[RMDB]
RNA sequence: GGGAACGACUCGAGUAGAGUCGAAAAAUACAGCGUAAUCGAGCGGAGGAAAACGGCACUCCGAAAAUCCGGUACGAUUAUGAUCCCACUGGGUCGACGCUAGAUGCAGAACCGGAUUGCCGAGGAAAUACUACCGCAGUUUCGACUGCGGUAGUAUAAAAGAAACAACAACAACAAC
Reactivity to DMS in 0.01 (KOAc 150mM, MgCl2 10mM, bicine 150mM(pH8.5), 24C), signal-to-noise 2, nucleotides 027 to 126: a090u000a110c090a120g000c030g000u000a070a000u000c010g020a150g040c010g010g010a030g000g000a040a060a120a160c040g020g000c010a040c130u000c000c040g000a020a070a100a140u000c000c000g020g010u000a090c040g000a030u000u010a070u000g000a050u000c010c000c110a180c180u000g010g010g030u000c020g000a080c050g010c010u000a080g020a090u020g000c070a080g010a120a100c000c010g000g010a020u000u020g000c040c010g010a110g010g010a070a090
Reactivity to 2A3 in 0.01 (KOAc 150mM, MgCl2 10mM, bicine 150mM(pH8.5), 24C), signal-to-noise 1, nucleotides 027 to 126: a000u220a020c060a000g000c000g020u060a080a010u040c040g020a010g120c010g030g000a030g030g080a070a050a080a050c000g000g060c020a010c010u050c030c000g010a100a000a000a010u040c000c010g020g020u060a090c000g000a020u050u090a070u290g060a020u040c030c000c000a020c070u110g010g000g040u020c010g020a020c040g030c070u040a060g020a300u140g080c090a010g000a090a020c000c000g010g010a000u000u010g000c010c000g010a000g040g060a190a300